[RMDB]
RNA sequence: GGGAACGACUCGAGUAGAGUCGAAAAUGCUCCGGUGCCAGGGGCGCUCUUCCCAAAGAACUACAAGGGUGAAAGAACCCCCACCAAGCCCCACCCCUCCCGCCCGCGGCACACAGUCACCCGCCCGAAUGUCUAAAAAAUUCGUUUUUUAGACAUUAAAAGAAACAACAACAACAAC
Reactivity to DMS in 0.01 (KOAc 150mM, MgCl2 10mM, bicine 150mM(pH8.5), 24C), signal-to-noise 4, nucleotides 027 to 126: u030g000c000u000c000c010g010g020u020g020c060c060a170g000g020g000g010c020g030c060u010c090u010u020c010c000c010a120a150a090g010a140a090c100u050a100c100a120a120g010g000g020u010g010a120a130a140g010a110a140c030c010c010c030c040a050c070c050a070a130g000c030c030c060c050a130c030c040c040c010u000c050c060c110g010c040c030c060g000c130g000g000c010a030c030a090c080a050g010u010c040a030c030c020c020g010c010c010c040g030
Reactivity to 2A3 in 0.01 (KOAc 150mM, MgCl2 10mM, bicine 150mM(pH8.5), 24C), signal-to-noise 4, nucleotides 027 to 126: u100g000c000u010c010c010g060g040u090g060c040c040a040g000g000g010g000c010g020c010u020c030u030u020c010c000c010a040a130a020g030a070a050c060u110a050c120a090a090g020g010g000u080g060a130a070a050g070a120a130c000c010c020c010c000a020c020c010a040a010g000c000c020c000c030a000c000c020c000c000u020c020c030c010g020c000c000c010g020c020g020g000c020a010c010a000c000a020g020u030c010a030c010c010c010g010c010c010c000g030